[RMDB]
RNA sequence: GGGAACGACUCGAGUAGAGUCGAAAACAGGAAUGGCGGGACCCACUCGACUGGGGUCCGCGUUCCAUCCUUUCUUACCUUGUGGCCGGCAUGGUCCCAGCCUCCUCGCUGGCGCCGGCUGGGCAACUAAUCAGUUUGUUCGCAAACUGAAAAAGAAACAACAACAACAAC
Reactivity to 2A3 in 0.01 (KOAc 150mM, MgCl2 10mM, bicine 150mM(pH8.5), 24C), signal-to-noise 9, nucleotides 027 to 129: c050a020g010g060a020a010u080g300g070c030g000g030g030a040c000c000c000a030c040u200c090g200a160c130u060g000g000g000g030u000c000c010g000c010g000u010u000c000c000a010u010c000c000u040u130u050c030u060u110a130c070c030u050u100g060u090g100g060c010c000g010g000c050a140u190g050g030u100c060c010c010a000g000c000c020u130c020c020u090c080g010c010u010g000g010c030g000c000c000g010g000c000u010g000g000g010c000a050a040c020u100a080a060
Reactivity to DMS in 0.01 (KOAc 150mM, MgCl2 10mM, bicine 150mM(pH8.5), 24C), signal-to-noise 8, nucleotides 027 to 129: c280a070g000g030a000a050u030g060g040c000g040g000g000a010c010c000c000a050c080u070c270g030a140c230u000g010g000g000g020u020c020c020g020c030g020u010u030c020c040a090u000c010c010u020u040u040c080u000u000a120c150c110u030u050g050u030g010g020c000c000g000g000c020a100u000g040g000u000c290c000c010a010g000c010c150u030c160c080u000c240g030c010u000g000g000c300g000c000c000g000g000c000u000g000g000g040c030a060a040c120u000a090a130
An RNA of 170 nucleotides, treated with 2A3 and DMS and read out base by base. Reactivities are given for positions 27 through 129.